[RMDB]
Structure probing data (2A3 and DMS) for a 177-nucleotide construct. The data come from the RNA Mapping Database (RMDB), library OK2TRN. The 2A3 profile rests on 2,891 reads. The reactions ran in a buffer of 150 mM KOAc, 10 mM MgCl2 and 150 mM bicine (pH 8.5), at 24 C. The DMS profile rests on 2,627 reads.

RNA sequence: GGGAACGACUCGAGUAGAGUCGAAAAGGACAGGGAGGAUCCAUGAGGUACCGGAUCCAGUAGGUACCAAGCUAGUUAUAUAUACGCUCGCUAGCAUAGAGCGUUACCGGAAACGGGACCUGUCCGAGAUGAUAUCGGGUUUCGACCCGAUAUCAUCAAAAGAAACAACAACAACAAC
Reactivity to 2A3 in 0.01 (KOAc 150mM, MgCl2 10mM, bicine 150mM(pH8.5), 24C), signal-to-noise 2, nucleotides 027 to 126: g000g000a010c020a000g010g020g030a100g030g100a050u000c060c030a100u150g050a050g040g000u000a000c010c000g020g040a030u050c000c040a000g030u060a010g000g020u000a000c020c010a010a000g040c020u050a030g060u290u040a180u010a030u020a000u010a210c010g010c010u000c010g020c080u090a070g090c040a130u170a070g000a000g000c010g020u010u020a020c000c010g000g000a080a040a000c020g030g000g090a010c010c000u000g000u020c010c020g000a020
Reactivity to DMS in 0.01 (KOAc 150mM, MgCl2 10mM, bicine 150mM(pH8.5), 24C), signal-to-noise 3, nucleotides 027 to 126: g020g010a010c000a020g000g010g020a140g010g030a160u000c050c030a110u010g010a200g010g000u000a000c040c010g010g020a170u010c050c090a090g010u010a130g010g000u000a020c020c030a070a120g010c080u000a060g000u000u010a100u010a100u000a120u010a050c060g000c020u000c050g010c130u000a130g010c150a150u000a100g000a030g020c030g000u020u000a040c060c050g000g000a060a080a130c030g000g000g000a070c000c000u020g010u000c000c000g010a080